[RMDB]
The record gives the reactivity of an RNA of 207 nucleotides to 2A3. It was measured as part of the RMDB library ARCHII. For 2A3, 670 sequencing reads were counted. The reactions ran in a buffer of 150 mM KOAc, 10 mM MgCl2 and 150 mM bicine (pH 8.5), at 24 C.

RNA sequence: GGGAACGACUCGAGUAGAGUCGAAAAAGAAUUGACUGUGGUUUGAAGCAUCGGCUAAACACACAGUCUAGCCAAGCUAUAUUGCUUGGAUAUAGUUUGGUAAAAACUUAAUCAAGCUAGCUUUUAUGCCCUGCUCUUCGGGUGAUAAAAGUUAAAACCUUUCUAGGUUCUUCGGAACCUAGAAAGGAAAAGAAACAACAACAACAAC
Reactivity to 2A3 in 0.01 (KOAc 150mM, MgCl2 10mM, bicine 150mM(pH8.5), 24C), signal-to-noise 1, nucleotides 027 to 156: a000g100a010a050u040u060g000a000c000u000g000u020g020g090u000u090u190g300a160a010g030c020a100u290c240g270g000c040u030a030a070a000c090a000c020a000c000a160g000u000c000u000a000g000c000c000a020a000g000c000u000a000u000a000u040u140g020c010u000u040g010g000a000u000a000u000a000g010u000u030u000g000g010u060a060a090a050a000a000c070u110u260a030a040u140c020a000a010g020c000u000a000g000c000u040u030u000u000a000u050g020c010c000c000u040g110c050u050c080u300u220c180g010g060g000u040g100a000u000a000a000a000a000g000u000u010a040a110a000a000